[RMDB]
Conditions: 150 mM KOAc, 10 mM MgCl2 and 150 mM bicine (pH 8.5), 24 C. Structure probing data (DMS and 2A3) for a 170-nucleotide construct.
RNA sequence: GGGAACGACUCGAGUAGAGUCGAAAAGGCCGGCUACUCUUCUUUCCCUUCUCUCGUCUUCUUCGGUCAACCUCCGAAGUUCCUCUUCCUCUUCCCUGCUGAGGGACUUUCCCCCGGAGGAGAGCUGCCACCAUCUAGUUCGCUAGAUGGAAAAGAAACAACAACAACAAC
Reactivity to DMS in 0.01 (KOAc 150mM, MgCl2 10mM, bicine 150mM(pH8.5), 24C), signal-to-noise 9, nucleotides 027 to 129: g010g010c050c070g050g020c040u010a070c000u010c020u030u000c010u010u030u030c000c000c040u020u020c000u030c000u000c060g040u030c050u020u010c040u030u020c060g020g010u020c090a090a130c040c040u000c000c020g030a040a040g020u000u000c000c000u020c050u020u010c000c040u040c090u020u020c000c000c010u020g010c050u040g020a030g000g000g000a050c100u030u010u030c020c020c000c040c040g000g040a020g000g000a070g000a070g020c070u050g020c020c040a240
Reactivity to 2A3 in 0.01 (KOAc 150mM, MgCl2 10mM, bicine 150mM(pH8.5), 24C), signal-to-noise 9, nucleotides 027 to 129: g040g020c040c030g030g010c010u100a100c020u040c000u070u020c010u030u070u050c010c030c000u070u020c040u010c010u020c020g090u010c030u080u010c000u040u030c050g030g000u060c070a090a080c020c020u030c000c010g030a050a020g010u010u010c000c000u010c000u040u030c000c020u050c030u040u030c000c000c000u020g020c030u040g030a030g010g010g010a010c000u050u080u050c000c010c000c000c010g010g000a010g020g010a010g000a010g010c030u050g010c010c010a060

It was measured as part of the RMDB library 15KLIB. The 2A3 profile rests on 136,684 reads.